[RMDB]
RNA sequence: GGGAACGACUCGAGUAGAGUCGAAAACGUUUCACCACCCCCCUUCCUCCCUCCAAGUGGCAUUGUAAAACUCACAGUGACAAAGAGACAGAGUAGGGUUCUAGGCCCCUGUUCCUGGGGACUUGAAUCAAGCUAAGACAUUCGUGUCUUAGCUUGAAAAAGAAACAACAACAACAAC
Reactivity to 2A3 in 0.01 (KOAc 150mM, MgCl2 10mM, bicine 150mM(pH8.5), 24C), signal-to-noise 5, nucleotides 027 to 126: c020g010u020u040u030c070a090c040c010a070c010c000c000c000c000c000u020u000c010c000u020c020c010c010u000c010c010a140a030g040u040g080g000c000a020u030u040g030u100a050a070a130a110c030u070c050a020c010a020g050u020g050a040c030a030a080a020g080a010g030a030c030a070g070a000g040u050a060g030g020g000u000u010c020u030a040g020g020c000c000c010c010u030g050u110u040c030c050u060g000g020g000g020a020c000u010u030g030a000a030
Reactivity to DMS in 0.01 (KOAc 150mM, MgCl2 10mM, bicine 150mM(pH8.5), 24C), signal-to-noise 5, nucleotides 027 to 126: c130g000u010u000u000c020a150c090c060a240c060c020c020c010c020c010u000u010c060c000u000c040c020c040u010c020c040a040a120g010u010g010g020c020a050u020u000g010u010a060a060a080a110c140u010c070a070c030a070g000u010g000a070c100a020a060a090g000a090g000a060c090a060g000a040g030u020a080g000g000g010u000u000c040u010a050g010g010c030c000c010c000u020g010u010u000c030c030u000g000g000g000g010a110c020u000u010g000a070a090
Structure probing data (2A3 and DMS) for a 177-nucleotide construct.
For DMS the reverse transcriptase was MarathonRT.
The reactions ran in a buffer of 150 mM KOAc, 10 mM MgCl2 and 150 mM bicine (pH 8.5), at 24 C.
The data come from the RNA Mapping Database (RMDB), libraries RFM100 and RFMREP.